Chemical mapping of a 177-nucleotide RNA with 2A3. The reactions ran in a buffer of 150 mM KOAc, 10 mM MgCl2 and 150 mM bicine (pH 8.5), at 24 C.
RNA sequence: GGGAACGACUCGAGUAGAGUCGAAAACUAGAAAGGAUUUUUACCUUUCUACCUAUAUUCUGAUACUAAAUGACUUAUUUGAUCAGUAGAGAUUAUUCCUUUUAAUUUAAAGUCAUCAUCUACAACAUGCGAAGGGAGAAUUCGUUCUCCCUUCGCAAAAAGAAACAACAACAACAAC
Reactivity to 2A3 in 0.01 (KOAc 150mM, MgCl2 10mM, bicine 150mM(pH8.5), 24C), signal-to-noise 1, nucleotides 027 to 126: c030u000a000g000a020a000a000g140g040a180u000u300u180u300u300a200c000c000u000u000u000c000u000a000c000c080u040a210u000a040u300u070c020u110g020a080u020a250c110u180a000a120a000u180g030a050c030u000u170a060u130u210u170g140a120u000c030a000g000u000a000g090a000g000a180u050u060a050u000u170c000c030u080u160u020u080a130a080u100u270u110a030a000a000g000u000c000a000u000c010a020u020c050u150a090c050a190a080c000a260
It was measured as part of the RMDB library OK1LIB.